[RMDB]
RNA sequence: GGGAACGACUCGAGUAGAGUCGAAAAUAUAAAUAAAACUUGGAGCUAGAUCAAUUAAUAUCGUCUAAGUACUAAAAGAAAGAUUUCGAUUUUUCAAAAGAAACAACAACAACAAC
Reactivity to DMS in 0.01 (KOAc 150mM, MgCl2 10mM, bicine 150mM(pH8.5), 24C), signal-to-noise 1, nucleotides 027 to 095: u010a110u030a170a110a100u010a080a060a080a090c050u000u090g000g000a020g030c070u000a070g000a070u030c140a050a050u020u010a100a090u050a010u000c060g020u010c020u000a020a020g040u010a100c070u010a010a060a070a070g010a060a050a120g000a090u000u000u000c090g000a010u000u000u000u020u020c070a000